[RMDB]
RNA sequence: GGGAACGACUCGAGUAGAGUCGAAAACAAGGAAAUCUGGUGAAGCAUUACCGCAAAGCAUUCCAGGGAACCGAGUGUAUUCAGAUGUUUUUGCACUACGUAGAUGCAGAUGGACCUUUCAAAGAUCACGUAUUUGACAUUCAGAGAAUCAAGACUCCAUGAGAAUAUUGUUCGCAAUAUUCUCAUGAAAAGAAACAACAACAACAAC
Reactivity to 2A3 in 0.01 (KOAc 150mM, MgCl2 10mM, bicine 150mM(pH8.5), 24C), signal-to-noise 9, nucleotides 027 to 156: c030a030a050g040g000a040a080a060u030c020u050g020g010u090g060a100a020g020c030a040u080u130a120c060c060g010c110a080a060a020g030c020a040u190u050c020c020a030g030g010g020a030a020c030c030g020a040g010u070g020u040a090u030u080c030a030g040a120u050g080u040u050u010u080u100g070c040a020c030u080a040c070g050u050a050g010a110u060g050c020a010g010a050u060g020g040a050c020c010u060u130u080c150a140a100a030g060a040u060c020a010c070g030u050a130u050u080u100g040a030c030a020u050u060c030a050g030a010g030a110a050u090c030a110a030g040a050c000u010c020
Reactivity to DMS in 0.01 (KOAc 150mM, MgCl2 10mM, bicine 150mM(pH8.5), 24C), signal-to-noise 4, nucleotides 027 to 156: c050a070a090g010g000a040a080a110u000c040u010g020g020u000g010a130a160g010c050a130u000u010a090c060c070g020c070a080a090a140g000c040a090u000u000c050c030a160g010g010g000a080a120c060c020g010a080g030u000g010u000a120u000u010c060a120g010a060u000g000u000u010u000u000u010g030c040a070c050u000a060c070g010u000a080g020a090u010g020c030a050g010a110u000g010g000a060c020c020u000u010u000c100a080a070a090g000a080u010c050a050c110g010u000a090u000u000u010g020a060c030a070u000u010c050a110g000a130g010a070a080u000c060a060a120g010a090c040u000c020
Record summary: Structure probing data (2A3 and DMS) for a 207-nucleotide construct. The data come from the RNA Mapping Database (RMDB), library OK3TST. The RNA was probed in 150 mM KOAc, 10 mM MgCl2 and 150 mM bicine (pH 8.5) at 24 C.